[RMDB]
RNA sequence: GGGAACGACUCGAGUAGAGUCGAAAAACGGCUGCUCGGUCCUAACCGGCGGUGUGGGCAGGAUCUGUCCCCAUAUGCGGUGGGUACUCGACGCGCUACGAGCCGGGAAACAGUGGGAGGACGAACUAGCAGCCAGCUCUCUGACGGCUCGCCGAUGUACGCAGUGUAAUUUCGAUUACACUGCGUAAAAAGAAACAACAACAACAAC
Reactivity to 2A3 in 0.01 (KOAc 150mM, MgCl2 10mM, bicine 150mM(pH8.5), 24C), signal-to-noise 4, nucleotides 027 to 156: a000c040g030g000c010u040g010c010u030c030g070g000u010c000c000u070a160a100c000c000g010g030c010g030g020u170g010u050g060g010g000c030a050g080g080a270u120c070u030g010u040c020c000c000c020a030u130a130u250g080c090g040g000u050g020g000g020u060a030c010u050c180g050a040c080g030c010g000c050u050a020c020g030a010g000c000c000g000g030g000a100a100a030c040a120g070u200g050g100g030a060g020g010a030c030g050a130a060c050u050a050g010c020a000g000c020c000a010g020c000u000c010u000c030u050g040a030c030g010g000c010u010c030g060c030c000g080a040u200g030
Reactivity to DMS in 0.01 (KOAc 150mM, MgCl2 10mM, bicine 150mM(pH8.5), 24C), signal-to-noise 2, nucleotides 027 to 156: a060c020g000g000c010u000g010c020u000c040g050g010u000c020c010u000a120a100c000c030g050g020c040g010g000u000g020u000g000g010g000c040a030g020g020a120u010c030u000g020u000c020c000c000c040a150u000a090u030g050c040g060g020u000g000g020g000u000a070c040u010c040g010a040c070g020c060g020c010u000a110c020g030a110g020c010c000g000g020g000a190a090a120c080a100g000u010g010g030g010a130g010g000a130c040g010a040a130c080u010a100g030c040a110g040c020c040a080g000c030u000c010u000c000u020g000a180c020g000g010c000u000c030g010c020c010g000a190u010g010